[RMDB]
RNA sequence: GGGAACGACUCGAGUAGAGUCGAAAAGCAUUACCGAGCUUAGCUGAGCUGCGCGAUUUGGUGAUUAACCAGCAAAAACGCGUUUUGGUUGAUUUCAGUCAGAUCAGUGAUGCUGAAGGUCAAGCAACUACUAUUAUGGGUUCGCCCAUAAUAGUAGAAAAGAAACAACAACAACAAC
Reactivity to DMS in 0.01 (KOAc 150mM, MgCl2 10mM, bicine 150mM(pH8.5), 24C), signal-to-noise 9, nucleotides 027 to 126: g010c020a060u000u000a040c010c030g010a040g010c020u000u010a260g010c010u000g000a050g020c050u000g010c060g010c060g000a170u000u000u010g010g010u000g000a150u010u010a080a070c110c010a040g000c100a040a060a040a100a100c120g010c040g020u000u000u010u010g010g010u000u010g000a100u010u000u000c020a050g000u000c140a040g000a050u000c010a030g010u000g000a050u010g010c000u000g010a100a100g000g000u000c130a070a090g010c100a090a200
Reactivity to 2A3 in 0.01 (KOAc 150mM, MgCl2 10mM, bicine 150mM(pH8.5), 24C), signal-to-noise 9, nucleotides 027 to 126: g000c020a100u030u060a020c010c030g020a010g030c010u250u260a010g000c010u030g010a010g000c020u040g010c060g010c030g130a140u100u050u170g100g030u050g020a060u060u070a030a030c030c010a010g050c040a030a040a070a090a070c060g030c010g040u060u040u140u110g050g000u020u050g040a110u030u120u100c030a030g030u030c010a010g010a060u010c000a010g010u010g040a020u080g000c000u020g040a080a020g040g020u060c060a030a010g020c000a040a030
This 177-nucleotide RNA was probed chemically with DMS and 2A3. Reactivities are given for positions 27 through 126. DMS adducts were read by reverse transcription with MarathonRT. For 2A3, 18,860 sequencing reads were counted. The data come from the RNA Mapping Database (RMDB), library OK2TST.